[RMDB]
This 177-nucleotide RNA was probed chemically with 2A3 and DMS. For DMS the reverse transcriptase was MarathonRT.
RNA sequence: GGGAACGACUCGAGUAGAGUCGAAAAGCUCUAGGAGACUAGAGCGAUACGUUAGAGAGCUCGUGGCAUGACUAACGGAUAGCCAGGUACGAGGUGGCCAGAGGACAUAGCUAUAGCUAUGUCCAAAGAGCAUACAUACCUUCGGGUAUGUAUGCUCAAAAGAAACAACAACAACAAC
Reactivity to 2A3 in 0.01 (KOAc 150mM, MgCl2 10mM, bicine 150mM(pH8.5), 24C), signal-to-noise 3, nucleotides 027 to 126: g020c000u010c010u010a000g000g020a070g010a090c000u010a000g000a000g000c000g000a010u020a040c010g010u060u030a020g020a000g030a010g070c020u020c100g030u100g090g020c080a070u150g030a120c000u030a030a010c040g060g070a070u050a040g040c020c020a020g070g040u020a030c030g020a070g020g040u060g010g010c000c000a050g040a080g090g000a000c000a000u020a000g020c020u190a040u040a300g000c000u000a000u010g010u000c000c000a010a000a000
Reactivity to DMS in 0.01 (KOAc 150mM, MgCl2 10mM, bicine 150mM(pH8.5), 24C), signal-to-noise 3, nucleotides 027 to 126: g000c000u000c010u010a020g010g000a270g010a210c000u000a000g000a000g000c010g000a080u050a040c080g020u010u000a030g000a200g010a150g000c000u010c100g030u020g000g030c040a120u030g030a130c030u010a040a060c050g000g000a090u020a040g000c000c010a050g030g000u000a060c070g000a070g000g000u010g020g000c020c080a130g030a170g000g000a020c010a010u000a000g000c000u010a120u040a070g000c000u000a000u000g000u010c000c000a000a030a080